An RNA of 177 nucleotides, treated with 2A3 and DMS and read out base by base. The reactions ran in a buffer of 150 mM KOAc, 10 mM MgCl2 and 150 mM bicine (pH 8.5), at 24 C. The 2A3 profile rests on 728 reads.

RNA sequence: GGGAACGACUCGAGUAGAGUCGAAAAGUAAGCAAAGACGUAAUAACCGUCAUGGUUAGUAAAUUGAGCGCAGGCCGUAAGAAAUGCAAACGCGUUAUGAUUCAGAACACUUGGUGCGCUAUUAUAAAAUAUGGUCGUGAUUCGUCACGACCAUAUUAAAAGAAACAACAACAACAAC
Reactivity to 2A3 in 0.01 (KOAc 150mM, MgCl2 10mM, bicine 150mM(pH8.5), 24C), signal-to-noise 1, nucleotides 027 to 126: g020u060a000a140g070c030a030a140a050g050a040c000g050u080a220a060u070a120a000c030c020g040u030c080a050u070g000g000u010u010a030g010u080a090a110a160u120u100g070a020g040c020g000c020a040g140g000c000c000g000u010a040a000g060a160a070a000u060g000c050a080a070a200c060g000c010g010u060u040a130u060g100a070u140u110c030a030g000a090a000c030a000c050u050u050g000g000u040g050c050g000c000u030a020u110u090a040u070a040a230
Reactivity to DMS in 0.01 (KOAc 150mM, MgCl2 10mM, bicine 150mM(pH8.5), 24C), signal-to-noise 3, nucleotides 027 to 126: g010u000a030a090g020c110a070a090a090g010a090c080g010u010a060a070u000a020a040c100c000g000u000c190a090u000g000g000u000u010a030g000u010a050a070a070u000u000g000a060g020c020g030c040a060g010g010c090c060g010u000a060a090g000a070a070a120u000g020c030a020a100a160c190g020c030g020u000u000a060u020g000a120u000u000c080a100g000a050a080c100a080c070u010u000g020g040u000g000c050g010c030u010a030u010u000a050u000a090a060